[RMDB]
RNA sequence: GGGAACGACUCGAGUAGAGUCGAAAACAACCAAUAGGAAUAGGAGUUGCAGGCCAUCCCUACUUUAACUCUUUUAUGGAUGCUGAAAGCCUGACCAGAAAAACUACAGCACAAACAACAGAUGACAUCCAUUAUGAAAAUUCGUUUUCAUAAUGGAAAAAGAAACAACAACAACAAC
Reactivity to DMS in 0.01 (KOAc 150mM, MgCl2 10mM, bicine 150mM(pH8.5), 24C), signal-to-noise 4, nucleotides 027 to 126: c120a070a150c060c020a080a120u000a070g010g010a110a080u010a080g010g000a070g020u010u000g010c070a040g000g010c060c060a050u010c040c000c040u000a080c120u000u010u000a070a080c090u010c030u000u000u010u000a130u020g010g010a100u000g010c040u000g000a110a090a130g000c020c030u010g000a080c040c050a130g000a040a030a050a070a060c100u000a060c040a030g030c020a040c050a050a060a070c070a030a080c080a050g000a100u010g000a110c170a130
Reactivity to 2A3 in 0.01 (KOAc 150mM, MgCl2 10mM, bicine 150mM(pH8.5), 24C), signal-to-noise 2, nucleotides 027 to 126: c010a000a000c020c030a030a070u170a180g020g100a120a060u040a090g060g000a060g010u050u040g060c030a000g000g000c030c000a060u010c000c010c000u010a030c020u140u160u060a100a070c010u000c000u050u040u050u020a120u120g030g020a030u010g020c050u030g060a130a070a020g020c000c050u040g030a050c000c030a080g110a080a110a030a010a010c030u090a040c010a000g010c000a000c040a050a070a010c020a050a000c030a030g120a110u060g030a030c010a030
Structure probing data (DMS and 2A3) for a 177-nucleotide construct. 2A3 is a SHAPE reagent: it acylates the 2'-hydroxyl of flexible nucleotides of all four kinds. For 2A3, 1,813 sequencing reads were counted. Conditions: 150 mM KOAc, 10 mM MgCl2 and 150 mM bicine (pH 8.5), 24 C. The DMS profile rests on 2,705 reads. The data come from the RNA Mapping Database (RMDB), library OK2TST.